About this RNA:
This 177-nucleotide RNA was probed chemically with 2A3. The RNA was probed in 150 mM KOAc, 10 mM MgCl2 and 150 mM bicine (pH 8.5) at 24 C. 2A3 adducts were read by reverse transcription with SuperScript II with manganese. It was measured as part of the RMDB library OK1LIB.
[RMDB]
RNA sequence: GGGAACGACUCGAGUAGAGUCGAAAACCGGGCUGUCAUGCUCGGACAGGUCGUGGCCGGCAAGCAAUGCCAGCACCGUCUGCCGAAGCUCGUGGGUGUGACCACCGUGGAUGGUGUGGGCAGCCCGGGUCCUGCCUACGUUCGCGUAGGCAGGACCAAAAGAAACAACAACAACAAC
Reactivity to 2A3 in 0.01 (KOAc 150mM, MgCl2 10mM, bicine 150mM(pH8.5), 24C), signal-to-noise 2, nucleotides 027 to 126: c000c020g000g000g000c000u000g010u030c000a050u070g020c030u000c000g040g000a130c020a000g050g050u210c010g060u090g050g090c030c000g010g010c000a000a120g100c070a200a250u110g000c000c020a000g010c020a030c000c050g010u000c000u020g000c000c000g000a090a030g020c000u110c130g020u120g000g120g010u200g140u210g110a090c000c000a000c000c000g060u210g260g130a210u300g000g040u040g000u080g070g020g000c000a000g000c000c010c010g000